[RMDB]
RNA sequence: GGGAACGACUCGAGUAGAGUCGAAAAACCAUCCUAUUCGUAGGAUGGUGCACCAUUGCCGAUUGUAUAUAAUACGGCAGGCGGAAAAGCGGUUCAAAUAAGGAACUUGUCAGUUCGCUGACAAGAACAAGAUUCAUCACUUCGGUGAUGAAUCUUGAAAAGAAACAACAACAACAAC
Reactivity to 2A3 in 0.01 (KOAc 150mM, MgCl2 10mM, bicine 150mM(pH8.5), 24C), signal-to-noise 1, nucleotides 027 to 126: a000c000c010a000u000c010c000u000a040u020u170c270g080u060a010g010g010a000u010g030g000u040g000c000a010c050c010a030u000u130g020c010c010g030a010u060u000g060u090a120u010a000u030a300a200u180a250c000g020g000c000a010g060g000c060g160g020a120a020a000a040g050c060g020g090u030u100c060a210a030a040u130a110a170g110g000a050a140c000u000u020g010u010c000a000g040u030u120c230g050c070u020g000a010c000a040a020g000a000a000
Reactivity to DMS in 0.01 (KOAc 150mM, MgCl2 10mM, bicine 150mM(pH8.5), 24C), signal-to-noise 2, nucleotides 027 to 126: a000c010c000a010u000c000c000u020a020u000u000c150g010u000a000g000g010a030u000g010g020u010g010c130a150c000c020a180u010u000g000c020c000g010a100u010u000g000u010a150u000a120u020a050a000u000a050c050g010g000c030a030g000g010c040g000g010a030a060a110a100g010c090g000g020u000u010c080a080a070a100u010a100a140g000g000a080a130c000u000u010g000u000c000a000g010u000u000c190g020c000u000g000a010c030a000a000g000a060a110

This 177-nucleotide RNA was probed chemically with 2A3 and DMS.
It was measured as part of the RMDB library M2PK50.
Conditions: 150 mM KOAc, 10 mM MgCl2 and 150 mM bicine (pH 8.5), 24 C.